[RMDB]
Structure probing data (2A3 and DMS) for a 177-nucleotide construct. The RNA was probed in 150 mM KOAc, 10 mM MgCl2 and 150 mM bicine (pH 8.5) at 24 C. It was measured as part of the RMDB libraries RFM100 and RFMREP. For 2A3 the reverse transcriptase was SuperScript II with manganese. For DMS the reverse transcriptase was MarathonRT. Values cover nucleotides 27 to 126.
RNA sequence: GGGAACGACUCGAGUAGAGUCGAAAAGUGGGCCUCUCAUAGUGUACCCAUGCCAUAGCAAAUGGCAGCCUCGAACCAUUGCCCAGUCCCCUUACCUGUGGGCUGUGAGCACUGAAGGGGGUUGCACAUUGUAGAAGCUUUUCGAAGCUUCUACAAUAAAAGAAACAACAACAACAAC
Reactivity to 2A3 in 0.01 (KOAc 150mM, MgCl2 10mM, bicine 150mM(pH8.5), 24C), signal-to-noise 9, nucleotides 027 to 126: g030u030g000g010g020c030c010u060c010u030c060a140u160a180g070u080g030u170a110c000c010c000a010u040g020c010c010a130u130a110g100c090a060a070a110u090g060g000c000a010g000c000c000u010c010g020a070a030c020c000a020u010u020g000c000c000c000a040g060u140c020c010c000c010u060u230a250c050c080u090g020u160g010g010g000c000u010g070u070g040a070g000c000a000c020u020g020a150a260g040g000g000g000g000u010u020g010c020a030c000
Reactivity to DMS in 0.01 (KOAc 150mM, MgCl2 10mM, bicine 150mM(pH8.5), 24C), signal-to-noise 9, nucleotides 027 to 126: g010u010g000g010g000c300c010u000c080u020c160a110u020a080g030u010g020u020a110c020c020c010a050u000g000c020c020a070u020a110g000c170a070a080a080u010g000g010c010a030g010c010c000u000c020g010a130a170c230c010a020u000u000g000c000c010c000a020g000u010c000c010c040c060u000u030a080c290c180u020g000u020g010g000g010c020u020g000u030g010a160g020c000a010c100u000g000a110a140g000g000g000g010g000u000u000g000c020a080c100